[RMDB]
RNA sequence: GGGAACGACUCGAGUAGAGUCGAAAACUUUAGGACCAACAACGUAAAAUUGGGUUACCUCAUUGUAGAUGAGUUUCACAACUUUGAAACGGAGGUCUACCGGCAGUCGCAAUUUGGGGGCAUAACAACCGAGGAGUAUCUUCGGAUACUCCUCGGUAAAAGAAACAACAACAACAAC
Reactivity to DMS in 0.01 (KOAc 150mM, MgCl2 10mM, bicine 150mM(pH8.5), 24C), signal-to-noise 2, nucleotides 027 to 126: c090u000u010u020a120g020g000a110c000c000a160a030c220a110a130c150g000u050a090a020a030a030u010u010g010g000g010u000u000a060c010c000u000c010a070u010u000g060u010a070g000a050u000g010a000g010u000u000u000c230a130c190a030a070c100u000u060u050g000a200a030a010c060g000g020a150g000g000u010c020u000a050c070c030g000g090c060a050g000u000c010g010c070a010a130u040u020u000g070g000g020g000g000c060a130u050a060a010c260a210
Reactivity to 2A3 in 0.01 (KOAc 150mM, MgCl2 10mM, bicine 150mM(pH8.5), 24C), signal-to-noise 2, nucleotides 027 to 126: c000u110u120u190a080g020g000a050c000c000a070a060c030a060a000c020g120u130a010a020a110a130u040u000g010g050g000u040u140a030c000c000u020c040a100u060u190g130u170a110g010a130u040g000a000g000u030u040u050c030a060c030a100a140c130u040u120u090g080a050a020a000c000g050g000a000g020g030u000c000u080a120c050c010g100g000c010a090g020u080c010g000c010a030a070u050u000u000g020g000g000g000g050c000a010u100a160a010c040a080